An RNA of 177 nucleotides, treated with 2A3 and DMS and read out base by base. The RNA was probed in 150 mM KOAc, 10 mM MgCl2 and 150 mM bicine (pH 8.5) at 24 C. It was measured as part of the RMDB library TTRINS. For DMS the reverse transcriptase was MarathonRT.
RNA sequence: GGGAACGACUCGAGUAGAGUCGAAAAGAUAUGGACGAACUACCCACCGAUUGAUUACCGAAGAACUACGCUACGCUCGGAAACGAGCGUAGCGUAGGGAGGUAUAGAUCGAGGUUCGUCCUAAGUCGAAUAUGUAUGUGUUCGCACAUACAUAUUCAAAAGAAACAACAACAACAAC
Reactivity to 2A3 in 0.01 (KOAc 150mM, MgCl2 10mM, bicine 150mM(pH8.5), 24C), signal-to-noise 1, nucleotides 027 to 126: g070a070u270a110u120g000g000a000c000g000a000a010c020u130a130c030c000c030a000c000c030g000a000u000u050g040a010u250u000a020c020c000g020a140a040g000a070a000c000u010a000c030g000c000u030a010c020g060c000u040c000g020g060a060a060a030c010g000a000g000c010g000u000a000g000c020g000u000a010g000g000g000a010g010g010u000a000u010a000g010a000u020c010g000a010g010g000u000u000c010g000u040c000c000u010a020a000g110u100c040
Reactivity to DMS in 0.01 (KOAc 150mM, MgCl2 10mM, bicine 150mM(pH8.5), 24C), signal-to-noise 6, nucleotides 027 to 126: g010a150u010a160u000g020g000a020c000g010a010a010c010u000a140c030c010c010a300c160c010g000a020u000u000g000a240u010u000a010c000c000g010a130a120g010a130a180c000u000a000c010g010c000u000a010c000g010c000u000c000g010g000a130a110a200c000g010a040g020c000g040u000a000g000c000g010u000a000g000g000g010a040g010g020u000a000u000a130g000a000u000c010g010a100g020g000u000u000c000g000u000c000c000u000a020a050g010u010c150
The DMS profile rests on 7,358 reads.